The record gives the reactivity of an RNA of 177 nucleotides to 2A3 and DMS. The data come from the RNA Mapping Database (RMDB), library RFM100. The RNA was probed in 150 mM KOAc, 10 mM MgCl2 and 150 mM bicine (pH 8.5) at 24 C. DMS adducts were read by reverse transcription with MarathonRT.
RNA sequence: GGGAACGACUCGAGUAGAGUCGAAAAAAGACGCCCUUUAGGGGGCGUCCGAGUCAUCAAUGAGACACCACCCUUUGAAACUGGAGGAUCUAACCCUGAGCCGUGAAUCCGGCCAGAGGACCGUGUCGUUUUCGCAUUGUUUCGACAAUGCGAAAACAAAAGAAACAACAACAACAAC
Reactivity to 2A3 in 0.01 (KOAc 150mM, MgCl2 10mM, bicine 150mM(pH8.5), 24C), signal-to-noise 2, nucleotides 027 to 126: a000a000g000a010c010g000c000c000c000u010u040u000a180g000g000g000g000g020c000g020u040c000c000g010a000g030u040c010a090u010c000a010a300u220g030a070g010a130c010a040c040c050a110c020c020c000u110u020u010g150a180a120a010c090u040g060g010a030g020g020a060u120c060u110a070a170c000c000c000u010g030a060g010c010c000g010u010g050a020a050u010c000c000g000g090c010c000a000g100a040g000g010a000c010c010g030u000g030u040c000
Reactivity to DMS in 0.01 (KOAc 150mM, MgCl2 10mM, bicine 150mM(pH8.5), 24C), signal-to-noise 1, nucleotides 027 to 126: a110a140g030a050c000g010c000c000c000u000u000u000a080g050g000g120g000g060c000g000u000c000c000g010a120g000u000c030a140u030c200a020a160u000g010a000g010a050c070a050c040c050a280c120c000c100u000u020u010g050a030a040a200c170u010g000g000a000g000g000a060u060c060u070a280a060c000c060c020u010g030a000g010c140c030g070u030g010a250a070u020c050c000g000g000c050c000a000g000a050g000g000a100c300c200g000u000g000u000c040